[RMDB]
Chemical mapping of a 177-nucleotide RNA with DMS and 2A3. The reactions ran in a buffer of 150 mM KOAc, 10 mM MgCl2 and 150 mM bicine (pH 8.5), at 24 C. 2A3 adducts were read by reverse transcription with SuperScript II with manganese.

RNA sequence: GGGAACGACUCGAGUAGAGUCGAAAAUAGACUAGCCGUAGUGGCGAAGAACGACCUGAUAGGGUGCUGCAGAGGCCCACUAUUAGGCUAGUAUAAAAAUCUCUGCUGAAUAAAGAAAGUGCGCAAAAUAAUGGAUGGAGUUCGCUCCAUCCAUUAUAAAAGAAACAACAACAACAAC
Reactivity to DMS in 0.01 (KOAc 150mM, MgCl2 10mM, bicine 150mM(pH8.5), 24C), signal-to-noise 3, nucleotides 027 to 126: u050a110g020a020c000u000a020g000c020c000g000u000a010g010u000g000g000c030g020a220a120g010a160a150c040g000a030c000c010u000g020a130u060a140g000g020g010u000g000c000u030g000c030a090g000a030g000g000c020c000c010a020c000u000a010u020u050a100g030g010c000u010a000g020u000a000u000a010a010a000a020a010u010c000u000c000u000g020c000u040g030a110a080u040a040a060a090g000a090a070a090g000u010g010c090g020c130a110a090a090
Reactivity to 2A3 in 0.01 (KOAc 150mM, MgCl2 10mM, bicine 150mM(pH8.5), 24C), signal-to-noise 2, nucleotides 027 to 126: u270a000g160a030c000u010a000g000c000c000g000u000a000g000u000g010g000c040g010a080a020g070a150a030c020g000a020c010c000u100g040a110u220a130g080g000g000u010g000c030u080g000c010a000g000a000g010g010c000c030c000a000c000u010a010u050u130a040g000g000c010u000a000g000u000a000u050a010a000a010a000a010u050c010u000c000u000g020c010u020g140a160a120u150a110a140a040g110a010a110a010g100u130g020c070g010c130a000a060a020